[RMDB]
RNA sequence: GGGAACGACUCGAGUAGAGUCGAAAAGAUGGAGGGUCGGGCCUCGGACGCCUCCUAUAAGAUGUAACUAUUACGAGGCCAUUAAUGGCGUUUUCGCCUAGGUGCACGUCGGCGUGCGUGACACCGUAAGACUUAAUGAAUAACACGCCGGAUACAAGAGCCAUAUAUAUUUCGAUAUAUAUGGCUCAAAAGAAACAACAACAACAAC
Reactivity to DMS in 0.01 (KOAc 150mM, MgCl2 10mM, bicine 150mM(pH8.5), 24C), signal-to-noise 1, nucleotides 027 to 156: g040a140u000g040g000a040g010g030g000u000c040g000g000g000c020c000u020c120g000g050a090c050g010c000c010u010c010c010u000a040u000a090a060g000a190u010g000u000a060a110c110u010a080u010u000a150c030g000a010g050g000c000c020a080u010u000a080a090u020g010g010c000g010u000u020u000u000c060g030c000c020u000a100g010g000u020g010c000a080c050g000u000c000g040g000c000g170u020g010c020g060u010g020a280c030a070c020c000g030u010a060a080g010a100c110u000u000a070a110u000g010a100a110u010a110a080c010a040c000g040c000c020g050g030a080u010a080c030a060a190
Reactivity to 2A3 in 0.01 (KOAc 150mM, MgCl2 10mM, bicine 150mM(pH8.5), 24C), signal-to-noise 2, nucleotides 027 to 156: g080a050u090g010g000a000g000g030g020u000c060g000g000g000c010c000u000c000g000g000a000c000g220c030c030u030c020c010u030a100u070a050a040g030a020u130g050u150a070a060c060u050a050u250u050a030c010g000a010g010g000c000c000a000u010u140a070a090u090g000g000c000g100u050u000u180u300c040g000c000c010u010a090g030g000u000g000c010a000c000g020u010c000g000g000c010g000u000g030c000g000u000g000a030c000a000c000c030g010u020a020a060g000a000c060u040u100a070a020u190g090a060a090u140a150a040c000a000c030g030c000c000g000g030a060u050a030c090a050a120